[RMDB]
RNA sequence: GGGAACGACUCGAGUAGAGUCGAAAAGUAAAGGCGGAGGAGGGUUUUGGCUUGCGCUGGGUCCGCCCGCGCGUGGUGUGGGCUGGAAUUCGUGUGUGGAGGAUGAUUAAUGCCGCGCGCCCAGGAAACCUACAUACCUGUUCGCAGGUAUGUAGGUAAAAGAAACAACAACAACAAC
Reactivity to 2A3 in 0.01 (KOAc 150mM, MgCl2 10mM, bicine 150mM(pH8.5), 24C), signal-to-noise 2, nucleotides 027 to 126: g050u050a080a050a100g010g010c010g010g000a050g020g090a070g000g050g050u060u060u090u090g050g060c040u050u110g040c010g000c070u060g030g000g030u030c020c050g000c010c000c000g020c010g010c030g070u080g080g000u030g000u040g010g000g060c060u090g010g080a050a040u100u080c050g010u070g040u000g010u040g010g060a060g060g010a010u060g000a020u100u200a090a060u090g000c000c000g010c020g000c020g000c000c010c000a030g100g040a080a070
Reactivity to DMS in 0.01 (KOAc 150mM, MgCl2 10mM, bicine 150mM(pH8.5), 24C), signal-to-noise 3, nucleotides 027 to 126: g010u020a080a090a140g000g000c070g010g000a120g010g010a110g010g000g010u010u000u010u000g010g010c080u000u010g020c090g030c050u010g010g000g000u010c060c080g010c030c010c010g010c010g010c060g020u000g000g010u000g030u020g000g010g010c050u000g020g000a060a100u000u010c070g010u010g010u010g010u000g000g010a140g010g000a120u000g000a100u000u010a060a120u010g010c020c030g020c030g000c060g000c040c060c030a080g000g000a090a120